[RMDB]
RNA sequence: GGGAACGACUCGAGUAGAGUCGAAAACCUCUUGGAUUCGUCCAAGAGGAUACGGGCUUUUGGGCCGGGGCCGGCCGGCCCGCCCGGAACGGGCAACCCAAACAUUUUGCCUAUUCGUAGGCAAAAAUAGUAUUCUGUGAUUCGUCACAGAAUACUAAAAAGAAACAACAACAACAAC
Reactivity to 2A3 in 0.01 (KOAc 150mM, MgCl2 10mM, bicine 150mM(pH8.5), 24C), signal-to-noise 1, nucleotides 027 to 126: c000c000u010c000u000u020g040g000a020u040u040c210g030u020c060c000a010a020g000a000g010g010a000u020a030c000g020g010g040c020u090u160u300u290g020g020g010c010c050g030g020g000g220c090c100g110g110c000c000g010g010c000c000c010g000c000c010c000g010g010a040a010c020g060g020g010c010a020a020c010c000c000a000a140a020c040a010u020u030u040u010g010c020c000u010a010u000u060c300g020u040a010g000g000c020a000a030a000a000a000
Reactivity to DMS in 0.01 (KOAc 150mM, MgCl2 10mM, bicine 150mM(pH8.5), 24C), signal-to-noise 2, nucleotides 027 to 126: c010c000u000c000u000u000g000g000a020u020u030c150g000u000c000c000a000a020g000a010g000g010a030u000a030c000g010g010g010c040u020u010u010u010g020g010g020c010c000g010g050g030g020c100c150g000g000c020c020g000g010c000c000c010g000c000c000c000g000g000a080a100c100g010g000g010c030a080a160c010c010c000a080a110a110c260a140u010u000u000u010g010c000c000u000a010u000u010c170g000u000a020g000g010c000a000a000a010a050a120